This 177-nucleotide RNA was probed chemically with DMS and 2A3. For DMS, 2,364 sequencing reads were counted. The reactions ran in a buffer of 150 mM KOAc, 10 mM MgCl2 and 150 mM bicine (pH 8.5), at 24 C. DMS adducts were read by reverse transcription with MarathonRT. For 2A3 the reverse transcriptase was SuperScript II with manganese. The 2A3 profile rests on 855 reads.
RNA sequence: GGGAACGACUCGAGUAGAGUCGAAAAUGAAAUAGCGUGUGCAAGACGCUGAUCUUGCCAUGAUCUGGUACUUUAGUGCUGAGGUCCGAGUUCCAGGGUAUCAUGUCGGACCUUAGCACUAAUUAAAUCCAUAGUCCUUCUUCGGAAGGACUAUGGAAAAAGAAACAACAACAACAAC
Reactivity to DMS in 0.01 (KOAc 150mM, MgCl2 10mM, bicine 150mM(pH8.5), 24C), signal-to-noise 2, nucleotides 027 to 126: u000g020a080a090a050u010a020g010c010g020u000g000u020g010c010a030a030g010a030c020g040c280u000g000a060u020c010u000u010g000c000c010a020u000g000a100u010c060u020g020g000u010a100c110u000u000u000a000g020u000g000c010u000g010a000g010g020u010c000c010g000a030g010u010u000c110c070a080g010g010g010u010a100u010c110a100u000g010u010c010g020g010a020c000c000u010u000a000g000c010a000c000u000a000a010u000u010a080a080a150
Reactivity to 2A3 in 0.01 (KOAc 150mM, MgCl2 10mM, bicine 150mM(pH8.5), 24C), signal-to-noise 1, nucleotides 027 to 126: u130g020a030a070a120u200a050g020c040g020u000g050u080g040c010a010a000g020a020c010g080c300u070g070a260u000c000u000u010g080c020c000a020u020g040a080u050c000u080g090g110u110a160c060u020u000u000a000g000u010g040c020u010g000a010g010g010u000c000c000g020a000g020u160u070c070c030a070g000g090g090u230a070u300c090a060u190g120u040c000g000g010a010c010c030u000u000a000g000c000a000c000u000a000a000u000u000a000a000a000